[RMDB]
RNA sequence: GGGAACGACUCGAGUAGAGUCGAAAACCCCUUCAGUUCGCUGAAGGGGAAAGGGUUCUCCCGCCCGCCGUGAACCCAGGCUAAAAGUUAAGGUAGCUGGGCAAACCCUACUCUUCGGAGUAGGGAACGAAUAGACAUGCUUCGGCAUGUCUAUUCGAAAAGAAACAACAACAACAAC
Reactivity to DMS in 0.01 (KOAc 150mM, MgCl2 10mM, bicine 150mM(pH8.5), 24C), signal-to-noise 2, nucleotides 027 to 126: c000c000c000c010u000u000c000a000g000u000u000c240g010c010u010g000a000a000g010g000g000g000a000a060a040g010g000g010u000u010c100u000c030c010c000g020c040c000c010g000c210c120g000u000g020a040a130c010c000c000a100g010g000c040u000a040a050a050a170g010u000u040a120a120g020g040u000a020g020c010u000g020g000g000c080a100a060a210c000c000c000u020a000c000u000c000u000u000c170g010g000a010g030u000a000g000g010g020a010a020
Reactivity to 2A3 in 0.01 (KOAc 150mM, MgCl2 10mM, bicine 150mM(pH8.5), 24C), signal-to-noise 2, nucleotides 027 to 126: c010c000c020c000u020u000c000a050g010u000u160c210g020c090u000g000a010a000g010g010g040g010a040a070a090g020g000g010u170u010c050u000c010c000c020g010c020c000c000g000c030c020g160u070g140a030a040c010c010c030a020g160g040c000u020a030a100a120a140g210u160u160a140a030g190g020u030a030g050c000u010g020g040g010c010a050a040a110c000c010c000u010a000c000u010c000u000u090c220g090g000a000g000u000a000g020g000g000a010a000
An RNA of 177 nucleotides, treated with DMS and 2A3 and read out base by base. The reactions ran in a buffer of 150 mM KOAc, 10 mM MgCl2 and 150 mM bicine (pH 8.5), at 24 C. DMS adducts were read by reverse transcription with MarathonRT. For 2A3 the reverse transcriptase was SuperScript II with manganese.